[RMDB]
RNA sequence: GGGAACGACUCGAGUAGAGUCGAAAAGAUCAAUUAUGAUUGCAAUGUAAUAUGUCAAGGCAGACAUAUCUAGCUGUCGCCUUAGCUAGAGAUUGCCGAUUUAUUGCUUUCAUAAGACCGGCAAGAAAUACUACCAGGAGUUCGCUCCUGGUAGUAUAAAAGAAACAACAACAACAAC
Reactivity to 2A3 in 0.01 (KOAc 150mM, MgCl2 10mM, bicine 150mM(pH8.5), 24C), signal-to-noise 3, nucleotides 027 to 126: g040a100u150c070a020a100u030u010a010u010g020a020u010u020g020c010a020a010u020g070u200a090a000u090a070u290g230u150c070a100a070g020g000c010a010g050a200c050a060u230a090u010c020u010a020g030c010u030g140u190c090g210c030c060u080u090a000g000c010u000a000g000a020g010a080u020u070g000c000c020g000a010u020u020u040a010u000u030g020c010u020u000u010c010a000u000a010a010g030a060c030c040g050g060c090a070a040g070a120a220
Reactivity to DMS in 0.01 (KOAc 150mM, MgCl2 10mM, bicine 150mM(pH8.5), 24C), signal-to-noise 5, nucleotides 027 to 126: g000a110u000c100a120a150u000u000a010u010g000a020u010u000g010c010a020a000u000g010u010a020a050u000a070u000g010u010c190a080a140g010g020c030a060g010a110c200a080u010a120u000c010u000a000g000c010u000g010u000c200g010c220c120u010u000a010g010c000u000a010g000a030g010a100u000u000g020c010c010g000a050u000u000u000a020u000u000g010c000u000u000u000c010a020u000a020a030g000a120c050c030g030g000c130a080a110g010a100a090